[RMDB]
RNA sequence: GGGAACGACUCGAGUAGAGUCGAAAACAUCAUCCAGGGCACUUUCCAUUCUCGCGGUAAAGCUAAAGUCCAUCAGAUCAGCAAAGUUUUCACUGAGUCGCUCGAUCACAAUAUCGCCCAUUUUACAUCUAAUCUUGUCGUUCGCGACAAGAUUAGAAAAAGAAACAACAACAACAAC
Reactivity to 2A3 in 0.01 (KOAc 150mM, MgCl2 10mM, bicine 150mM(pH8.5), 24C), signal-to-noise 2, nucleotides 027 to 126: c010a010u100c020a020u000c020c020a020g010g000g030c020a000c040u040u040u000c000c010a030u110u060c050u060c050g000c050g020g080u140a080a050a020g000c040u090a150a080a000g020u000c020c000a050u050c020a020g040a070u030c020a000g100c030a030a040a120g020u040u060u050u060c050a070c040u080g020a020g070u060c020g030c030u020c040g030a050u060c010a020c020a100a160u150a050u100c040g040c010c010c040a010u100u090u050u090a100c090a050
Reactivity to DMS in 0.01 (KOAc 150mM, MgCl2 10mM, bicine 150mM(pH8.5), 24C), signal-to-noise 2, nucleotides 027 to 126: c070a050u000c120a080u000c030c040a120g010g000g030c050a060c060u000u010u000c020c050a140u010u000c020u000c110g030c130g000g010u000a030a080a120g010c100u010a070a080a090g020u000c000c060a090u000c090a120g000a040u000c050a110g020c130a090a080a090g000u000u020u000u000c030a060c020u000g010a010g000u000c050g010c020u010c070g030a030u010c110a070c100a060a100u000a040u000c120g000c040c000c020a160u000u000u000u000a070c230a140